An RNA of 307 nucleotides, treated with DMS and 2A3 and read out base by base. 2A3 adducts were read by reverse transcription with SuperScript II with manganese. The reactions ran in a buffer of 150 mM KOAc, 10 mM MgCl2 and 150 mM bicine (pH 8.5), at 24 C. The DMS profile rests on 23,709 reads. Values are in units of 0.01, from 0 to 300, in steps of 10.

[RMDB]
RNA sequence: GGGAACGACUCGAGUAGAGUCGAAAACACUUCGUUCGCGAAGUGAGACUCAGGCUUCGGCCUGAGUCAACGACAUACGGUGACGUAUGUCGAAGAGUAUCUUCGGAUACUCACUACGCCGCUUCGGCGGCGUAGACUAGCACUUCGGUGCUAGACGAAGCGGUGACGCUUCGAGACCUUGCGUGAGCAAGGUCACAUGAGCUUCGGCUCAUGAAGGGAAACUGGAAGGCGGGGCGAGCUGCAGCCCCAGUGAAUCAAAUGCAGCUAGUACAUCAUUCGUGAUGUACAAAAGAAACAACAACAACAAC
Reactivity to DMS in 0.01 (KOAc 150mM, MgCl2 10mM, bicine 150mM(pH8.5), 24C), signal-to-noise 5, nucleotides 027 to 266: c010a010c000u000u000c000g020u010u030c200g040c010g010a020a000g010u000g000a100g010a010c000u010c000a010g000g000c000u000u010c200g000g000c000c010u000g010a010g010u000c000a030a130c020g010a020c000a000u000a000c010g000g000u010g000a030c000g020u010a000u000g010u000c000g010a120a100g000a010g000u000a000u000c000u000u020c170g020g000a010u000a010c000u000c010a140c010u000a000c000g010c010c000g010c000u000u030c160g020g030c020g010g010c010g020u010a000g010a300c010u000a010g010c020a020c000u000u020c150g020g020u000g000c000u010a010g000a280c040g000a010a010g010c010g000g000u020g000a170c000g010c000u000u010c000g010a160g010a010c000c000u000u000g000c010g010u030g000a260g020c000a000a000g000g000u010c000a020c030a000u000g000a010g010c000u000u020c190g020g010c000u000c000a000u000g010a190a130g000g000g000a070a090a130c080u000g000g010a120a100g000g010c090g000g010g000g010c010g000a090g000c000u000g000c000a150g000c010c000c000c000a030g010u030g000a080a070u020c110a010a020a040u000g000c000a000g010c000u010a150
Reactivity to 2A3 in 0.01 (KOAc 150mM, MgCl2 10mM, bicine 150mM(pH8.5), 24C), signal-to-noise 9, nucleotides 027 to 266: c000a000c000u000u000c010g040u040u050c240g010c010g120a000a000g000u000g000a020g000a000c000u000c000a000g010g000c010u060u170c260g140g000c000c000u000g000a000g000u000c000a000a010c010g000a000c000a000u000a000c010g010g020u040g020a000c000g000u000a000u000g000u000c000g000a030a010g000a000g000u010a000u010c010u080u100c230g090g000a000u000a000c000u000c000a000c000u000a000c000g000c010c000g000c030u060u080c240g140g000c000g000g000c000g000u000a000g000a040c000u000a000g000c000a000c010u040u050c270g100g000u000g000c000u000a000g010a010c020g000a000a000g000c010g010g060u110g040a030c010g000c010u000u000c010g010a040g000a000c000c000u000u000g000c020g040u110g040a060g020c000a000a000g000g000u000c000a000c000a000u010g000a000g000c010u050u110c230g100g000c000u010c000a000u010g030a020a050g090g030g030a110a130a080c130u160g090g110a100a050g130g090c140g040g010g000g000c070g020a050g000c010u020g000c000a010g000c010c020c010c020a030g100u170g120a030a050u110c060a050a010a020u080g000c000a000g000c000u000a000